[RMDB]
This 177-nucleotide RNA was probed chemically with DMS and 2A3.
RNA sequence: GGGAACGACUCGAGUAGAGUCGAAAAGAUAUGGAUGAAUAAGACAUGAUGUUUCGGAAACGAAACCUCAACAGCUUAGUCAUCCUAAGUCAAAACCUGGGACCCUUGUUCGCAAGGGUCCCAGGAAGUUUAAGACACAGUUCGCUGUGUCUUAAACAAAAGAAACAACAACAACAAC
Reactivity to DMS in 0.01 (KOAc 150mM, MgCl2 10mM, bicine 150mM(pH8.5), 24C), signal-to-noise 2, nucleotides 027 to 126: g000a020u000a140u010g000g000a000u000g000a020a010u000a010a000g010a110c130a180u010g000a010u000g000u000u000u000c000g000g000a060a020a110c000g010a000a010a030c000c040u000c000a030a050c290a170g010c000u000u010a010g000u000c000a000u000c000c000u000a010a070g000u000c000a120a070a100a130c000c000u000g020g010g010a020c000c000c010u000u000g030u010u010c210g030c010a010a000g000g010g000u010c000c000c010a000g000g010a000a030
Reactivity to 2A3 in 0.01 (KOAc 150mM, MgCl2 10mM, bicine 150mM(pH8.5), 24C), signal-to-noise 1, nucleotides 027 to 126: g000a020u040a000u050g000g010a010u000g020a020a010u040a030a010g090a100c100a210u050g000a000u010g000u000u000u020c010g000g000a040a030a010c010g020a000a000a000c000c020u010c000a100a300c080a060g020c010u030u010a010g020u020c000a010u020c000c000u000a040a000g020u000c040a030a020a110a210c000c000u020g040g050g010a000c000c060c000u020u000g030u090u000c150g000c110a030a000g020g110g000u030c000c000c020a000g000g000a010a000

Overview
Source: RMDB library TTRDEL, as collected in RNAgym. The RNA was probed in 150 mM KOAc, 10 mM MgCl2 and 150 mM bicine (pH 8.5) at 24 C. For DMS the reverse transcriptase was MarathonRT. For 2A3 the reverse transcriptase was SuperScript II with manganese.